[RMDB]
RNA sequence: GGGAACGACUCGAGUAGAGUCGAAAAGAAGACGUGACGAAAAGUCACGUCAAUACAGAGACUACGCAUCUCUGAAAAACACAACAAAAGUGUAAAAGCGUAGCAGGAUCGAGAGAUCCUGAAAAGAGGGAUUACCAGUAUUCGUACUGGUAAUCCCAAAAGAAACAACAACAACAAC
Reactivity to 2A3 in 0.01 (KOAc 150mM, MgCl2 10mM, bicine 150mM(pH8.5), 24C), signal-to-noise 2, nucleotides 027 to 126: g280a070a010g000a000c010g030u000g000a010c020g010a140a180a050a020g010u000c000a010c010g000u000c000a000a000u040a000c000a000g030a000g020a000c000u020a000c000g000c000a300u020c050u000c000u030g010a040a000a000a000a020c060a010c030a190a080c120a010a170a150a110g010u020g010u040a030a040a030a000g000c000g000u000a000g000c000a000g000g000a000u000c000g000a010g000a000g000a100u000c000c000u010g000a020a000a000a000g120a100
Reactivity to DMS in 0.01 (KOAc 150mM, MgCl2 10mM, bicine 150mM(pH8.5), 24C), signal-to-noise 2, nucleotides 027 to 126: g010a180a100g010a000c000g000u010g000a000c000g020a090a140a150a080g010u000c000a020c000g000u000c000a060a050u070a210c030a080g000a000g000a300c010u000a000c020g020c000a280u020c000u000c060u000g000a030a200a010a180a080c010a010c000a080a100c140a130a070a100a070g000u000g000u010a060a000a090a020g000c010g000u000a000g000c020a000g000g060a000u000c000g000a140g000a140g000a000u000c000c000u020g000a000a050a010a000g040a140

Background:
An RNA of 177 nucleotides, treated with 2A3 and DMS and read out base by base. For DMS the reverse transcriptase was MarathonRT. The DMS profile rests on 2,206 reads.